Background: This 207-nucleotide RNA was probed chemically with 2A3. Source: RMDB library OK3TST, as collected in RNAgym. 2A3 adducts were read by reverse transcription with SuperScript II with manganese. Reactivities are given for positions 27 through 156. Values are in units of 0.01, from 0 to 300, in steps of 10.
RNA sequence: GGGAACGACUCGAGUAGAGUCGAAAAAACAAUUCCUGGUUGUAAAAAGUCAGGAAGCAGUUCAAUUGCUUGCUUAGUACGAUCUAAAACUUCCGCAGACAUUGAGCCUUUGUGAGCAAGAAUACCUACAGCUUUAUCCUUGUUAAAACAUACAAAGCGUCAAAUAGGUGUUCGCACCUAUUUGACGAAAAGAAACAACAACAACAAC
Reactivity to 2A3 in 0.01 (KOAc 150mM, MgCl2 10mM, bicine 150mM(pH8.5), 24C), signal-to-noise 1, nucleotides 027 to 156: a000a000c050a030a010u050u000c030c000u040g090g020u010u030g010u100a140a110a150a070a000g020u000c010a000g000g020a000a020g020c010a040g000u000u090c090a100a080u090u060g010c020u080u040g050c010u000u010a000g000u040a020c090g030a070u070c020u190a100a100a040a100c010u080u040c120c090g040c130a040g030a070c000a100u100u110g120a000g020c000c020u000u000u100g030u010g000a000g000c000a040a040g040a080a000u030a040c010c020u040a080c060a010g000c000u120u060u090a040u190c000c000u010u000g010u020u130a070a040a040a110c060a010u130a040c040a050a160a020g080